[RMDB]
RNA sequence: GGGAACGACUCGAGUAGAGUCGAAAAGAUCGCGUAAAUAGGCCCGAUCGAGAAUGGGUUUUUUGAAAUUAUCCAGAUCGCUGCUAAUAACGACUUCUUUAAUAUGAUCGGACAAACGCAGCGGUGAAUAGUGGAUUACGUUCGCGUAAUCCACUAUAAAAGAAACAACAACAACAAC
Reactivity to 2A3 in 0.01 (KOAc 150mM, MgCl2 10mM, bicine 150mM(pH8.5), 24C), signal-to-noise 1, nucleotides 027 to 126: g020a000u000c000g000c010g020u030a040a300a070u140a090g090g020c030c050c050g010a030u050c040g020a090g090a070a090u060g000g010g000u050u010u030u020u120u160g110a100a080a050u080u030a030u000c030c020a030g010a110u010c030g000c010u020g030c000u020a050a030u090a200a060c000g020a030c010u080u100c020u020u300u120a240a120u280a110u300g110a070u030c000g000g040a060c060a030a040a000c040g010c000a000g000c030g000g020u000g020a080
Reactivity to DMS in 0.01 (KOAc 150mM, MgCl2 10mM, bicine 150mM(pH8.5), 24C), signal-to-noise 2, nucleotides 027 to 126: g000a010u010c000g020c280g000u000a070a130a120u010a110g030g000c030c180c000g000a010u000c020g000a200g000a110a080u000g010g030g040u000u000u000u010u000u010g010a120a070a040u040u010a080u010c020c000a110g000a030u000c010g000c020u000g050c020u000a080a140u010a140a110c010g010a040c060u000u010c140u010u010u000a140a060u020a050u010g000a080u000c010g040g000a080c170a020a110a090c300g000c000a010g010c000g020g010u000g030a040
Structure probing data (2A3 and DMS) for a 177-nucleotide construct. 2A3 adducts were read by reverse transcription with SuperScript II with manganese. Reactivities are rounded to 0.1 and cut off at 0 and 3. Source: RMDB library OK2TST, as collected in RNAgym. For 2A3, 661 sequencing reads were counted. The reactions ran in a buffer of 150 mM KOAc, 10 mM MgCl2 and 150 mM bicine (pH 8.5), at 24 C.